This 177-nucleotide RNA was probed chemically with DMS and 2A3. For 2A3 the reverse transcriptase was SuperScript II with manganese.
RNA sequence: GGGAACGACUCGAGUAGAGUCGAAAAGAUAUGGACUUUGUACAUCAGUCGGUACUCGGAAACGAGUACCCGACGACGACGUAUUGAGUCCUAAGUCAAAACAAGAGUAUGUUCGCAUACUCUUGAACACAUCUAGGCAGUUCGCUGCCUAGAUGUGAAAAGAAACAACAACAACAAC
Reactivity to DMS in 0.01 (KOAc 150mM, MgCl2 10mM, bicine 150mM(pH8.5), 24C), signal-to-noise 2, nucleotides 027 to 126: g000a010u000a040u000g000g010a010c020u000u000u010g010u000a010c010a040u010c000a010g010u000c010g000g000u000a010c000u000c000g020g000a000a000a040c010g000a000g030u010a000c300c170c030g030a000c010g000a020c300g000a010c040g030u000a020u010u000g010a020g020u010c010c000u010a000a090g010u010c000a120a100a080a300c020a000a030g000a020g010u000a010u000g030u010u020c300g040c000a020u000a000c000u000c000u020u000g010a150a180
Reactivity to 2A3 in 0.01 (KOAc 150mM, MgCl2 10mM, bicine 150mM(pH8.5), 24C), signal-to-noise 1, nucleotides 027 to 126: g000a010u000a000u040g000g000a020c030u120u090u020g000u030a000c010a150u130c080a280g020u000c020g000g030u000a010c000u020c000g000g020a000a000a000c020g000a020g000u010a000c000c000c000g050a000c000g020a080c100g010a000c000g000u010a030u030u080g030a000g000u000c000c000u000a000a010g000u020c010a020a020a080a220c010a020a010g000a000g000u000a000u030g060u080u190c300g010c120a000u010a000c000u000c010u000u000g000a050a000